[RMDB]
RNA sequence: GGGAACGACUCGAGUAGAGUCGAAAACGUCGUGAACUAGCGACAAUGCAUUAGGUCCAUCGUUAUCUAACCGAAACAUCGUGACUAGUAGUAGAAUAGAACCAUGAGAGGGCGCUGGCAAACAAAGACGGAGUCUAUUAUUCGUAGUAGGCUCCGUAAAAGAAACAACAACAACAAC
Reactivity to 2A3 in 0.01 (KOAc 150mM, MgCl2 10mM, bicine 150mM(pH8.5), 24C), signal-to-noise 9, nucleotides 027 to 126: c040g000u000c010g010u030g060a120a060c060u020a070g010c000g030a020c010a010a030u070g020c030a050u040u120a040g030g000u020c020c020a050u030c060g020u020u050a070u060c020u040a030a060c040c010g010a040a040a010c030a060u050c030g050u050g060a060c030u020a010g080u020a000g010u010a020g050a100a040u060a050g020a030a030c020c010a040u040g020a020g020a020g050g020g000c010g000c010u010g020g000c020a050a040a020c030a030a120a010g070
Reactivity to DMS in 0.01 (KOAc 150mM, MgCl2 10mM, bicine 150mM(pH8.5), 24C), signal-to-noise 9, nucleotides 027 to 126: c120g010u010c040g020u000g000a120a110c090u010a090g000c040g000a040c060a100a090u020g010c080a060u020u020a070g010g000u000c030c030a060u010c070g010u000u020a070u020c070u010a090a090c080c050g010a090a100a100c090a050u000c040g020u010g010a090c030u000a040g010u020a060g010u010a060g010a050a090u010a060g000a090a090c060c050a040u010g000a090g000a080g000g010g010c030g000c020u000g000g010c060a050a050a080c120a050a050a090g000

Structure probing data (2A3 and DMS) for a 177-nucleotide construct. DMS adducts were read by reverse transcription with MarathonRT. The RNA was probed in 150 mM KOAc, 10 mM MgCl2 and 150 mM bicine (pH 8.5) at 24 C. High 2A3 reactivity points to a flexible backbone, as in loops and unpaired stretches. It was measured as part of the RMDB library OK1LIB.